The data come from the RNA Mapping Database (RMDB), library OK3TST. Structure probing data (2A3) for a 207-nucleotide construct. For 2A3, 748 sequencing reads were counted. For 2A3 the reverse transcriptase was SuperScript II with manganese.
RNA sequence: GGGAACGACUCGAGUAGAGUCGAAAAGAGGCGAAAUAAUUCCCAUCUCCUGUGUACGGCCGGAGAUGGGUGUGGCCGUACUAAUAAGCCUCAUAGUGACGAGAGUCACGAAUUCUGGAUAGCCUGUGGUAGUCGGCUAUCCUAUGACUACCGUAGAGCUACUAUACCGCUUCGGCGGUAUAGUAGCAAAAGAAACAACAACAACAAC
Reactivity to 2A3 in 0.01 (KOAc 150mM, MgCl2 10mM, bicine 150mM(pH8.5), 24C), signal-to-noise 1, nucleotides 027 to 156: g010a000g000g000c050g060a180a000a000u250a020a050u170u090c000c010c000a000u010c000u010c010c030u010g030u010g050u060a050c020g040g010c000c000g000g000a040g000a030u060g000g000g000u000g000u020g020g040c020c000g000u010a020c010u040a010a140u040a100a040g000c010c010u010c010a040u090a050g020u000g010a010c050g000a000g000a000g070u010c020a000c000g020a000a010u160u080c050u080g010g030a010u010a000g000c000c000u040g010u030g110g100u060a060g070u080c000g010g000c000u000a020u000c000c010u030a080u050g020a000c030u020a020c020c020g060u060a030g010a000